RNA sequence: GGGAACGACUCGAGUAGAGUCGAAAAUCACUACGGCCCCUUGAAUUCUGUUUUGAACAACCACAAGGCAUUAAACCCCUCAAUGAAGAUGCUUAGACGUCCUUUAGGGGUUACUUCUGAGCAUGGCGACUAGUCUCUUGUUCGCAAGAGACUAGUCAAAAGAAACAACAACAACAAC
Reactivity to DMS in 0.01 (KOAc 150mM, MgCl2 10mM, bicine 150mM(pH8.5), 24C), signal-to-noise 3, nucleotides 027 to 126: u000c060a080c040u010a100c080g010g020c000c020c010c020u000u000g020a050a130u000u000c050u010g010u010u000u020u000g000a080a090c130a070a140c050c050a080c110a120a080g010g020c040a050u000u010a070a070a130c050c020c000c030u000c130a060a100u010g020a060a070g010a040u000g000c000u010u000a080g010a080c050g000u000c000c030u000u000u000a110g010g000g000g010u000u000a020c020u000u000c010u010g010a030g000c050a040u010g020g010c150
Reactivity to 2A3 in 0.01 (KOAc 150mM, MgCl2 10mM, bicine 150mM(pH8.5), 24C), signal-to-noise 1, nucleotides 027 to 126: u060c020a000c000u130a010c090g080g020c050c010c000c000u100u100g150a060a060u130u040c050u060g060u060u040u030u090g050a050a010c020a000a040c020c010a020c010a120a040g060g000c030a010u300u000a120a090a100c000c000c000c000u020c030a030a030u130g090a050a040g080a110u000g000c020u030u000a010g020a100c030g050u090c000c030u070u020u050a060g000g000g000g070u010u050a000c020u010u020c000u020g000a000g000c040a030u050g040g050c080
This 177-nucleotide RNA was probed chemically with DMS and 2A3. Conditions: 150 mM KOAc, 10 mM MgCl2 and 150 mM bicine (pH 8.5), 24 C. For DMS, 2,090 sequencing reads were counted. 2A3 adducts were read by reverse transcription with SuperScript II with manganese.